[RMDB]
RNA sequence: GGGAACGACUCGAGUAGAGUCGAAAAGAUAUGGACCCGAAAACAGAGCGAUAAGCUACUCGGAAACGAGAUAGCUUUUGACGCUCUGAGGGUCCUAAGUCAAAACUGACUGCUUCGGCAGUCAGAACUGUAUCAUUAUCUUCGGAUAAUGAUACAGAAAAGAAACAACAACAACAAC
Reactivity to 2A3 in 0.01 (KOAc 150mM, MgCl2 10mM, bicine 150mM(pH8.5), 24C), signal-to-noise 7, nucleotides 027 to 126: g030a020u050a030u120g000g000a010c010c010c040g030a150a130a020a150c030a000g000a000g000c020g050a080u010a090a000g000c000u000a010c000u000c010g020g030a060a050a040c020g010a010g050a130u010a000g000c000u020u010u030u070g110a050c040g010c000u000c000u000g010a080g000g000g000u000c000c000u010a080a010g040u010c030a020a020a110a170c000u000g000a000c010u000g010c000u030u070c220g150g000c000a000g000u000c000a000g000a010a010
Reactivity to DMS in 0.01 (KOAc 150mM, MgCl2 10mM, bicine 150mM(pH8.5), 24C), signal-to-noise 9, nucleotides 027 to 126: g000a040u000a300u000g010g000a010c000c000c000g000a080a100a140a300c030a020g000a010g020c000g020a140u000a010a010g010c000u000a010c000u000c000g010g000a100a070a150c000g000a000g000a100u000a000g010c000u000u000u000u000g010a150c070g010c000u000c000u000g000a070g000g010g010u000c000c000u000a000a060g010u000c020a110a050a110a150c010u000g000a010c000u000g010c000u000u000c200g020g010c000a010g000u000c000a000g010a040a140